The data come from the RNA Mapping Database (RMDB), library TTRDES. An RNA of 177 nucleotides, treated with DMS and 2A3 and read out base by base. For DMS the reverse transcriptase was MarathonRT. The RNA was probed in 150 mM KOAc, 10 mM MgCl2 and 150 mM bicine (pH 8.5) at 24 C.

[RMDB]
RNA sequence: GGGAACGACUCGAGUAGAGUCGAAAAGAUAUGGACGAGUCAACGCCCGAAGAACAGUCCUACUCGGAAACGAGUAGGAGCUGGGAGGGUUGACUCGUCCUAAGUCAAACUGCGCGUUCGCGCGCAGGAUACCAUAUUAGUUCGCUAAUAUGGUAUCAAAAGAAACAACAACAACAAC
Reactivity to DMS in 0.01 (KOAc 150mM, MgCl2 10mM, bicine 150mM(pH8.5), 24C), signal-to-noise 8, nucleotides 027 to 126: g000a030u000a300u010g000g000a020c010g010a020g000u000c000a030a060c120g010c030c010c130g010a130a170g010a160a230c040a020g010u000c000c000u000a000c000u000c000g010g000a060a060a110c000g000a020g010u000a000g000g000a010g020c010u000g000g020g020a130g010g010g020u000u000g000a010c000u000c000g010u000c000c000u000a000a050g000u000c020a120a110a300c000u000g000c000g020c000g030u010u020c290g010c010g010c010g010c000a000g000
Reactivity to 2A3 in 0.01 (KOAc 150mM, MgCl2 10mM, bicine 150mM(pH8.5), 24C), signal-to-noise 8, nucleotides 027 to 126: g010a000u030a020u100g000g010a010c000g010a010g010u010c010a040a070c240g290c070c020c020g080a300a110g050a130a020c010a000g010u000c000c000u000a000c000u000c000g010g000a030a030a030c010g000a000g000u000a010g000g000a020g050c000u010g000g030g120a300g010g060g000u010u010g000a000c000u000c000g000u000c000c000u000a000a000g000u010c000a010a030a100c010u010g000c000g000c000g030u070u090c300g000c000g000c000g000c150a000g000